[RMDB]
RNA sequence: GGGAACGACUCGAGUAGAGUCGAAAACUGCCGCCGGGACGCAGUGAUCCUCGCAGGGUCGCACGGUCGCCUCGGGUCGGCCUCGUGUCGGCUCGACCUGCGAGGGGAGCGAGUAGCGAGCCCGACCAAAACUUUCUCGCCUUCGGGCGAGAAAGAAUCUUCAAAUAAACUUCGGUUUAUUUGAAGAAAAAGAAACAACAACAACAAC
Reactivity to 2A3 in 0.01 (KOAc 150mM, MgCl2 10mM, bicine 150mM(pH8.5), 24C), signal-to-noise 2, nucleotides 027 to 156: c030u060g040c000c020g060c010c010g010g060g000a010c000g000c020a070g060u010g030a020u010c010c000u010c000g000c000a010g040g010g080u190c050g040c040a080c120g160g120u210c060g060c010c030u000c000g010g000g020u040c010g010g060c030c010u110c080g210u300g010u010c000g000g000c040u010c010g000a040c010c000u010g010c000g000a000g000g000g000g000a010g010c010g020a080g060u140a020g040c000g010a080g030c020c040c000g010a010c020c010a050a060a000a080c000u010u000u010c000u000c000g010c010c000u030u060c110g130g000g000c000g000a000g000a000a010a000g000a000a010